[RMDB]
RNA sequence: GGGAACGACUCGAGUAGAGUCGAAAACGAAAUCUAAACUGAAACAGAGGCGUCACCCAAUUAUCAAUUGGUAAGUGAUAUCUAUGUUUCGAUCUGUAUCUCGGCCUUUCACUCCUCUUCUUCUUGAUCAAGGGUACUGUUUCGACAGUACCCUUGAAAAAGAAACAACAACAACAAC
Reactivity to 2A3 in 0.01 (KOAc 150mM, MgCl2 10mM, bicine 150mM(pH8.5), 24C), signal-to-noise 4, nucleotides 027 to 126: c040g020a050a020a000u130c030u190a050a020a190c100u120g000a020a000a030c000a000g040a020g060g020c040g010u000c000a010c000c020c000a000a020u130u100a290u240c190a060a010u000u010g020g030u080a200a040g000u020g010a000u000a020u040c010u020a020u040g030u000u000u000c000g050a030u000c000u070g110u060a070u020c020u000c010g020g000c000c010u020u070u030c040a050c030u020c020c010u040c010u100u060c020u040u000c000u000u050g020a030
Reactivity to DMS in 0.01 (KOAc 150mM, MgCl2 10mM, bicine 150mM(pH8.5), 24C), signal-to-noise 2, nucleotides 027 to 126: c100g020a030a040a060u030c100u020a080a100a130c100u020g000a010a020a020c010a010g000a010g000g000c110g020u000c000a040c000c000c000a000a000u000u030a080u040c300a100a040u000u000g000g000u000a030a100g010u000g010a010u010a040u000c040u000a030u040g000u000u000u000c000g000a070u000c110u020g050u020a040u000c020u000c020g040g000c050c010u000u000u000c070a060c060u010c020c010u000c060u000u040c080u000u000c020u010u000g000a250